[RMDB]
RNA sequence: GGGAACGACUCGAGUAGAGUCGAAAAGAUAUGGAGGCUGCUUUUGACGCUUCUGUAUCGGAAACGAUACUAGAAGCGAUAAGCAGCUCCUAAGUCAAACCCGGUUAUAGUUCGCUAUAACCGGGAAGUAUAUUGCUUCCUUCGGGAAGCAAUAUACAAAAGAAACAACAACAACAAC
Reactivity to DMS in 0.01 (KOAc 150mM, MgCl2 10mM, bicine 150mM(pH8.5), 24C), signal-to-noise 3, nucleotides 027 to 126: g000a040u000a260u000g000g000a030g010g010c010u000g000c010u000u000u000u000g020a180c100g020c000u000u000c000u000g010u000a010u000c000g000g000a100a080a110c000g000a010u010a000c000u010a000g020a010a000g020c010g030a040u000a000a020g010c010a000g000c000u000c000c000u000a010a160g000u010c030a080a100a190c000c000c000g010g000u000u000a000u000a000g020u000u010c250g020c010u000a000u000a000a020c010c010g000g000g000a000a010
Reactivity to 2A3 in 0.01 (KOAc 150mM, MgCl2 10mM, bicine 150mM(pH8.5), 24C), signal-to-noise 2, nucleotides 027 to 126: g000a020u050a060u120g000g040a040g240g280c010u020g010c040u080u070u110u220g230a150c150g000c010u000u000c010u000g020u000a000u020c000g000g020a020a020a000c010g000a000u020a030c150u230a110g000a010a000g010c000g010a010u000a000a000g000c010a000g000c000u000c000c000u000a030a010g040u030c040a070a020a270c000c000c000g000g000u010u000a010u010a010g040u040u090c300g000c160u000a000u010a000a000c000c000g000g000g000a000a000
This 177-nucleotide RNA was probed chemically with DMS and 2A3.
The 2A3 profile rests on 5,348 reads.
For 2A3 the reverse transcriptase was SuperScript II with manganese.
Conditions: 150 mM KOAc, 10 mM MgCl2 and 150 mM bicine (pH 8.5), 24 C.
Source: RMDB library TTRDEL, as collected in RNAgym.